[RMDB]
RNA sequence: GGGAACGACUCGAGUAGAGUCGAAAAACAGACCCGCGAAGGUCAGCCAGUUGUGCUGUACAAACGCGUAAUUCUGACCGGUGACCAUAUCACCGACUCCACUUCCAGCCAGGACGAAUACAACCAAGAGAGCUUAUGAUUUCGAUCAUAAGCUCUCAAAAGAAACAACAACAACAAC
Reactivity to DMS in 0.01 (KOAc 150mM, MgCl2 10mM, bicine 150mM(pH8.5), 24C), signal-to-noise 3, nucleotides 027 to 126: a140c080a090g010a100c300c160c020g000c040g010a090a190g000g000u010c010a020g010c050c020a250g010u010u020g020u000g030c010u000g010u010a040c010a020a060a270c090g010c010g020u000a110a040u000u010c000u000g010a170c080c000g000g000u000g010a150c080c110a060u020a300u000c010a050c040c000g010a150c070u010c020c010a100c160u020u000c070c000a040g010c070c060a050g000g000a030c100g020a070a050u000a050c090a040a060c060c070a040a170
Reactivity to 2A3 in 0.01 (KOAc 150mM, MgCl2 10mM, bicine 150mM(pH8.5), 24C), signal-to-noise 2, nucleotides 027 to 126: a000c030a040g040a050c050c040c010g000c020g020a080a030g080g020u010c010a010g000c010c010a100g080u200u150g090u260g100c030u070g030u220a020c020a060a130a060c040g040c000g040u050a030a100u060u000c030u030g070a100c040c060g000g040u050g000a060c060c080a140u060a030u290c010a010c020c010g040a010c010u020c000c000a030c050u060u000c000c020a070g030c000c020a000g010g020a030c010g050a020a020u120a070c060a040a030c070c020a080a000